[RMDB]
RNA sequence: GGGAACGACUCGAGUAGAGUCGAAAAAUAAUGCACACCCACACAGAUGCCUGCAGACACAGGUAUGCACACACAUGCAUAACACAGAUGCACACCCAUACGUGCAUACAGGAGUGUGUUCACACUGCCAACAUACCCAUAGUGCGCAUGUGCACACGUCGCAAAGUUAAUUCGUUAACUUUGCGACAAAAGAAACAACAACAACAAC
Reactivity to DMS in 0.01 (KOAc 150mM, MgCl2 10mM, bicine 150mM(pH8.5), 24C), signal-to-noise 2, nucleotides 027 to 156: a150u000a070a060u000g050c060a110c050a060c000c070c060a140c040a200c040a120g020a040u010g040c020c010u000g030c040a130g020a100c110a100c040a080g010g010u000a040u010g000c030a120c060a030c070a020c130a070u000g050c000a120u000a050a090c050a130c080a090g010a100u000g000c000a040c030a150c000c020c130a130u000a140c050g030u000g010c000a020u000a050c110a090g080g000a070g010u000g000u010g010u000u000c070a150c060a140c140u010g000c010c040a040a090c030a040u000a070c000c030c000a170u030a200g000u000g000c000g180c040a020u000g010u000g030c070a090c060a080c120
Reactivity to 2A3 in 0.01 (KOAc 150mM, MgCl2 10mM, bicine 150mM(pH8.5), 24C), signal-to-noise 4, nucleotides 027 to 156: a000u130a010a050u150g030c050a020c020a050c070c040c000a020c010a010c030a040g120a060u070g010c020c000u030g010c030a040g050a120c020a000c010a070g050g000u050a030u070g020c020a000c000a000c010a000c010a080u020g020c000a030u080a120a060c060a000c030a070g050a040u000g020c030a000c000a020c010c090c000a060u150a170c090g010u000g000c020a020u070a040c040a040g030g020a130g030u020g010u010g000u050u050c030a040c030a040c070u140g080c050c010a020a000c020a070u080a080c000c020c010a020u110a080g040u040g000c000g000c040a030u040g020u050g020c020a000c000a010c160
This 207-nucleotide RNA was probed chemically with DMS and 2A3. Reactivities are rounded to 0.1 and cut off at 0 and 3. 2A3 adducts were read by reverse transcription with SuperScript II with manganese. For DMS the reverse transcriptase was MarathonRT. Conditions: 150 mM KOAc, 10 mM MgCl2 and 150 mM bicine (pH 8.5), 24 C. Reactivities are given for positions 27 through 156. High DMS reactivity at an A or C suggests that its Watson-Crick edge is free. For 2A3, 3,430 sequencing reads were counted.